[RMDB]
RNA sequence: GGGAACGACUCGAGUAGAGUCGAAAAGAUAUGGAUAGGUGGAGACUUUUGGACGACAUGUGCCAGGUCUCGGAAACGAGACCGGUAAUUCAUGUCGUCCAAUGGUCGUUGAAACCUAUCCUAAGUCCCUAUUACGAAUGUUCGCAUUCGUAAUAGGAAAAGAAACAACAACAACAAC
Reactivity to DMS in 0.01 (KOAc 150mM, MgCl2 10mM, bicine 150mM(pH8.5), 24C), signal-to-noise 6, nucleotides 027 to 126: g000a120u010a300u000g000g010a010u000a000g010g010u000g000g000a110g010a010c000u000u000u000u000g010g000a020c010g010a010c000a010u000g020u000g010c010c000a180g080g010u000c000u000c000g010g000a080a100a250c010g010a010g000a010c000c000g010g000u000a040a110u010u010c020a010u000g000u000c000g000u000c000c000a000a000u000g000g010u000c010g010u010u010g000a170a190a030c000c000u000a010u000c000c000u000a030a110g000u010c050
Reactivity to 2A3 in 0.01 (KOAc 150mM, MgCl2 10mM, bicine 150mM(pH8.5), 24C), signal-to-noise 4, nucleotides 027 to 126: g030a020u110a050u230g000g010a000u010a010g000g030u020g010g050a030g000a020c010u010u010u020u040g010g000a000c000g020a000c010a010u020g020u040g030c070c230a300g020g000u000c000u000c010g000g020a040a050a000c020g000a000g010a000c000c020g000g010u040a050a040u180u090c010a000u000g000u000c000g000u000c000c010a000a000u010g000g000u000c010g000u060u000g000a000a000a000c010c000u010a010u000c000c000u000a040a010g010u020c000